[RMDB]
RNA sequence: GGGAACGACUCGAGUAGAGUCGAAAACGCGGAUGCGGCCGAUCGCGGCCUGAACCAACGCCGACGCGCCGCCGUCGGGCAUCAACCCCACGUUGGUGUGAGCGAGCAUGAAAAACGCAUUGUCGGAGCUAGCUACCAGUUUCGACUGGUAGCUAGCAAAAGAAACAACAACAACAAC
Reactivity to DMS in 0.01 (KOAc 150mM, MgCl2 10mM, bicine 150mM(pH8.5), 24C), signal-to-noise 2, nucleotides 027 to 126: c040g010c050g060g040a060u000g010c050g020g010c070c030g000a110u010c280g010c040g010g000c020c020u000g010a080a050c040c040a030a060c060g010c030c000g010a070c010g020c060g020c060c030g000c060c020g000u000c130g000g000g040c140a020u000c170a100a210c090c030c020c060a290c090g000u000u000g010g010u010g030u010g010a130g000c020g000a120g050c030a080u000g000a030a050a040a060a130c090g040c000a170u000u000g010u000c020g000g000a230

The record gives the reactivity of an RNA of 177 nucleotides to DMS.
The reactions ran in a buffer of 150 mM KOAc, 10 mM MgCl2 and 150 mM bicine (pH 8.5), at 24 C.
DMS adducts were read by reverse transcription with MarathonRT.
Source: RMDB library OK2TRN, as collected in RNAgym.